[RMDB]
RNA sequence: GGGAACGACUCGAGUAGAGUCGAAAACGGCCGGCGGAUUCAUCGACAUGAGCACGAACGUCGUGCCAUCGAACAAGGCUCUCGAUGUGCAGGUCGCCUUCAUCGCCUCCGAUGGGGACUAUGGGCCGUGGUCAAUCACGGCGAAUGUCACCUCGACAAUGAUAGUGUUCUUCGGAACACUAUCAUUAAAAGAAACAACAACAACAAC
Reactivity to 2A3 in 0.01 (KOAc 150mM, MgCl2 10mM, bicine 150mM(pH8.5), 24C), signal-to-noise 5, nucleotides 027 to 156: c020g000g020c010c000g020g020c010g030g090a140u130u090c020a020u030c040g070a070c070a150u150g020a020g030c020a030c080g090a290a100c110g110u110c010g040u090g150c050c000a060u080c020g020a030a030c030a040a060g060g000c030u000c010u030c050g010a020u040g060u120g040c040a020g020g040u030c010g020c010c000u130u110c030a090u070c040g110c020c010u130c040c040g030a090u240g030g000g000g000a010c030u090a110u180g070g160g000c010c010g010u020g000g070u200c130a100a120u190c000a010c010g000g000c010g030a020a050u080g010u010c000a030c110c030u010c020g020a050c090
Reactivity to DMS in 0.01 (KOAc 150mM, MgCl2 10mM, bicine 150mM(pH8.5), 24C), signal-to-noise 2, nucleotides 027 to 156: c050g020g020c000c000g000g050c020g030g010a180u010u000c050a100u010c020g000a030c050a090u000g000a190g000c020a090c040g010a100a180c210g040u010c010g020u000g020c000c030a080u000c070g020a080a120c040a090a170g030g000c040u000c010u010c000g020a040u000g010u000g000c020a070g020g040u010c020g000c020c020u000u000c030a120u000c040g000c000c010u000c050c010g010a130u010g000g000g010g000a030c020u000a090u010g000g000g020c000c000g010u020g000g000u000c240a120a140u000c000a010c000g020g000c000g010a030a040u000g000u000c030a030c000c000u000c010g010a170c240